Structure probing data (2A3) for a 207-nucleotide construct. The RNA was probed in 150 mM KOAc, 10 mM MgCl2 and 150 mM bicine (pH 8.5) at 24 C.
[RMDB]
RNA sequence: GGGAACGACUCGAGUAGAGUCGAAAAUCAGCUUCAUGCAAGCGAUGAUGGAAUUGAUGGUCUUGAAGCCGCGCAGUUCCUCGCCCUUGCCAUUGAAGGUGUAGACGGCCAGCGGGCCAGCGGUCUGCCCCGAGUCUGACUCAAAGACAAGGUUGACCGUCGUCUUGAAAUUCGUUUCAAGACGACGAAAAGAAACAACAACAACAAC
Reactivity to 2A3 in 0.01 (KOAc 150mM, MgCl2 10mM, bicine 150mM(pH8.5), 24C), signal-to-noise 2, nucleotides 027 to 156: u150c010a010g160c000u000u000c020a000u060g010c010a010a040g000c060g150a100u060g040a130u180g000g030a010a030u020u000g010a050u070g070g050u070c100u220u200g150a170a010g020c010c060g000c060g000c030a000g000u000u000c000c000u000c020g000c000c010c000u020u000g020c080c080a080u020u130g020a000a000g040g010u010g000u000a200g040a030c020g030g010c010c020a020g070c050g060g030g000c040c020a090g150c100g020g020u020c000u010g010c000c000c050c060g020a050g000u010c000u010g040a010c010u020c050a050a110a000g100a080c090a040a070g100g040u030u050g030a040c020